[RMDB]
RNA sequence: GGGAACGACUCGAGUAGAGUCGAAAAGCUUUCUUUCUUCCAUUGACCCACUGCUCGAGGACGUCCUCCCUGUCUCCUCGGUUCUUCUUCGAUCCGGACCGGCUCAUCUCGGCAAGAGGCGGCAGUCCUACAUUUAGUGGUUCGCCACUAAAUGUAGAAAAGAAACAACAACAACAAC
Reactivity to 2A3 in 0.01 (KOAc 150mM, MgCl2 10mM, bicine 150mM(pH8.5), 24C), signal-to-noise 4, nucleotides 027 to 126: g020c040u100u210u070c010u090u170u050c020u180u020c050c040a100u030u120g020a030c010c030c030a090c060u010g000c000u000c000g010a010g030g070a200c000g020u000c010c000u060c010c000c000u000g010u000c020u010c000c010u010c020g040g000u040u010c010u160u020c030u100u130c080g050a060u020c020c020g050g030a090c010c010g030g020c010u020c030a150u030c050u030c050g000g020c040a080a020g000a010g010g010c000g010g000c010a000g050u030c000
Reactivity to DMS in 0.01 (KOAc 150mM, MgCl2 10mM, bicine 150mM(pH8.5), 24C), signal-to-noise 3, nucleotides 027 to 126: g010c160u010u000u000c020u000u010u010c030u010u010c040c050a190u000u010g010a110c010c010c090a110c040u000g000c010u010c020g000a020g010g000a120c070g010u000c020c020u000c010c040c010u000g000u000c010u000c030c020u010c050g010g010u000u000c050u010u000c100u000u010c080g000a060u010c050c060g010g020a100c040c020g010g000c050u000c100a080u010c050u000c040g020g000c100a170a160g010a050g000g000c040g000g010c050a060g000u010c070
Chemical mapping of a 177-nucleotide RNA with 2A3 and DMS. For DMS, 3,225 sequencing reads were counted. Values cover nucleotides 27 to 126. DMS adducts were read by reverse transcription with MarathonRT.